The record gives the reactivity of an RNA of 177 nucleotides to DMS and 2A3. For DMS, 5,927 sequencing reads were counted. Values cover nucleotides 27 to 126. DMS adducts were read by reverse transcription with MarathonRT.
RNA sequence: GGGAACGACUCGAGUAGAGUCGAAAAUAAAACAGUCCGUGGUAGCACUACCAUGACCAUGUUUCGGCACAUGGUCAGCCGAGUACAGCUUCGCCUGUACUCAGCGAACAACAACAACAACAAAAAAGACUACAAUUAAGUUCGCUUAAUUGUAGUCAAAAGAAACAACAACAACAAC
Reactivity to DMS in 0.01 (KOAc 150mM, MgCl2 10mM, bicine 150mM(pH8.5), 24C), signal-to-noise 5, nucleotides 027 to 126: u010a060a080a090a150c120a120g010u000c030c040g030u000g010g020u000a040g000c180a100c140u000a060c020c020a110u010g000a010c010c010a010u000g000u010u000u000c180g020g020c170a210c000a010u000g010g000u000c000a050g020c020c030g000a010g010u010a010c000a010g000c030u010u010c300g010c150c000u000g020u000a010c000u000c000a010g010c000g000a090a060c040a020a030c010a020a030c020a040a030c030a020a010c050a020a030a090a080a080a110
Reactivity to 2A3 in 0.01 (KOAc 150mM, MgCl2 10mM, bicine 150mM(pH8.5), 24C), signal-to-noise 6, nucleotides 027 to 126: u150a010a070a020a020c030a020g080u010c030c040g030u030g020g010u030a040g050c130a060c240u050a030c040c020a060u060g000a000c000c000a000u010g040u020u110u190c150g100g020c070a000c000a010u000g000g000u010c020a000g000c010c010g000a000g000u000a000c000a000g010c040u140u210c130g040c040c000u000g000u000a000c010u000c000a000g000c010g020a030a010c010a010a000c000a000a000c000a010a000c000a000a000c020a030a140a020a030a000a020

The reactions ran in a buffer of 150 mM KOAc, 10 mM MgCl2 and 150 mM bicine (pH 8.5), at 24 C.